[RMDB]
RNA sequence: GGGAACGACUCGAGUAGAGUCGAAAAAAUGGCGUAGACCUCAGGCACCUAGUAUGUGUAUCGGAGUAAGCUUCGCUAGACAGAGCCACAGAAGUGGGUUGAAGUGGGGCGUAAAGCAAGGACGGUCCAGAGUACUAAACUUCGGUUUAGUACUCUGAAAAGAAACAACAACAACAAC
Reactivity to DMS in 0.01 (KOAc 150mM, MgCl2 10mM, bicine 150mM(pH8.5), 24C), signal-to-noise 5, nucleotides 027 to 126: a070a050u000g000g010c010g010u000a050g010a060c050c010u000c030a090g000g000c040a040c020c060u010a130g010u000a080u000g020u000g000u000a090u010c030g000g010a050g000u000a110a100g000c020u000u000c020g020c050u000a050g000a090c110a090g010a110g010c030c020a030c050a110g000a090a090g010u010g010g000g000u000u010g010a060a070g010u000g010g000g000g010c060g010u000a050a070a090g020c060a060a090g000g010a050c100g020g000u010c100
Reactivity to 2A3 in 0.01 (KOAc 150mM, MgCl2 10mM, bicine 150mM(pH8.5), 24C), signal-to-noise 2, nucleotides 027 to 126: a000a000u130g040g000c040g010u020a000g010a150c010c010u010c010a010g080g020c010a000c010c010u040a070g070u070a160u200g070u050g010u040a100u140c030g070g000a010g040u060a080a030g030c000u030u020c000g000c010u000a020g010a010c040a010g090a020g070c020c010a060c020a050g230a300a030g030u070g040g050g000u080u110g050a120a040g020u030g020g020g020g000c010g030u070a090a070a010g020c010a040a020g050g010a030c020g000g020u000c010